[RMDB]
RNA sequence: GGGAACGACUCGAGUAGAGUCGAAAAUUCUAUUAGCAUCCUCUGGAGUUGAGGCAGGAGCUGGAACGGGAUGAACUGUAUAUCCCCCACUUGCAGGGAACCUAGCCCAUGCCGGGGCCUCAGUCGAACAGUUCCUGUAUUUCGAUACAGGAACUGUAAAAGAAACAACAACAACAAC
Reactivity to DMS in 0.01 (KOAc 150mM, MgCl2 10mM, bicine 150mM(pH8.5), 24C), signal-to-noise 2, nucleotides 027 to 126: u000u000c040u010a100u000u030a160g000c010a090u000c050c030u000c090u000g040g000a160g030u000u000g040a080g000g000c030a060g040g040a150g000c010u000g010g020a080a280c120g000g000g000a060u000g000a170a170c000u000g000u010a070u010a140u000c100c020c010c030c040a160c300u000u000g020c040a040g030g000g000a180a060c010c040u000a070g000c300c000c030a080u000g040c070c060g000g000g000g040c010c000u000c030a060g040u000c040g020a080
Chemical mapping of a 177-nucleotide RNA with DMS.
For DMS the reverse transcriptase was MarathonRT.
For DMS, 976 sequencing reads were counted.